Description: The record gives the reactivity of an RNA of 177 nucleotides to DMS and 2A3. Source: RMDB library OK2TRN, as collected in RNAgym. The RNA was probed in 150 mM KOAc, 10 mM MgCl2 and 150 mM bicine (pH 8.5) at 24 C. For 2A3 the reverse transcriptase was SuperScript II with manganese. For 2A3, 839 sequencing reads were counted. DMS adducts were read by reverse transcription with MarathonRT.

RNA sequence: GGGAACGACUCGAGUAGAGUCGAAAAUUCAUCCGCCGAUUUAUCAUUUUGCUUAUCAGGUAUACAUGACCGUCGUCCUACUUGUAAUCCCGCUAGUUGUGAUGGCGGGUUUGUACGGCAACGUCAACCUGCCGUCAGUAUUCGUACUGACGGCAGGAAAAGAAACAACAACAACAAC
Reactivity to DMS in 0.01 (KOAc 150mM, MgCl2 10mM, bicine 150mM(pH8.5), 24C), signal-to-noise 2, nucleotides 027 to 126: u000u020c140a110u010c050c030g050c050c010g010a080u010u000u000a090u050c080a080u000u000u000u000g000c090u000u030a030u010c070a100g000g000u010a060u010a050c160a070u000g000a050c070c050g010u000c030g050u000c010c040u000a010c050u000u010g020u000a070a090u000c010c010c010g000c010u000a020g010u010u010g040u010g000a060u010g020g010c010g020g000g000u000u010u000g010u020a010c100g000g000c100a020a040c080g010u020c160a100a190
Reactivity to 2A3 in 0.01 (KOAc 150mM, MgCl2 10mM, bicine 150mM(pH8.5), 24C), signal-to-noise 1, nucleotides 027 to 126: u010u000c010a050u050c020c040g080c010c010g030a010u040u000u250a110u080c000a020u000u080u140u300g070c040u140u090a030u220c070a040g090g000u120a090u000a070c070a030u130g050a070c040c050g040u040c000g060u010c000c000u040a090c010u030u010g060u090a010a060u010c030c010c030g000c050u000a070g090u150u200g190u140g240a080u000g000g000c000g020g020g000u020u030u030g000u000a020c020g000g010c090a040a000c020g090u080c010a000a040